[RMDB]
RNA sequence: GGGAACGACUCGAGUAGAGUCGAAAAUGGCGAAGAACUACCACUGAACUGCUCGAUGGUUGGCGUCGACAUGGCCUCUGUGCUGCAGCAGGAUGACACGGCUGUGCAUACUCUUGGUGUUAGCCGCGCCAUAAUUAGGUUUCGACCUAAUUAUGGCAAAAGAAACAACAACAACAAC
Reactivity to 2A3 in 0.01 (KOAc 150mM, MgCl2 10mM, bicine 150mM(pH8.5), 24C), signal-to-noise 7, nucleotides 027 to 126: u070g020g010c030g020a050a010g050a140a050c020u060a030c030c010a030c040u050g020a100a020c040u070g030c020u020c040g080a090u060g080g000u080u090g050g020c020g030u040c020g010a030c030a080u080g050g020c000c010u020c050u070g060u070g030c020u030g000c010a020g010c010a010g030g090a080u100g020a020c020a010c090g080g010c050u080g020u060g050c020a020u050a180c020u040c010u100u110g040g010u020g030u030u050a030g030c020c020g040c030
Reactivity to DMS in 0.01 (KOAc 150mM, MgCl2 10mM, bicine 150mM(pH8.5), 24C), signal-to-noise 7, nucleotides 027 to 126: u000g000g020c030g000a090a070g010a090a090c060u000a060c040c030a050c060u010g010a070a180c100u000g000c090u000c020g020a070u000g010g000u000u010g010g020c070g010u010c050g000a050c100a050u010g000g000c050c020u000c090u000g020u000g020c040u010g020c050a040g010c030a050g000g000a070u000g010a080c100a090c040g010g010c060u000g010u000g000c050a080u000a150c110u000c070u000u000g010g010u000g010u000u000a090g020c020c030g010c230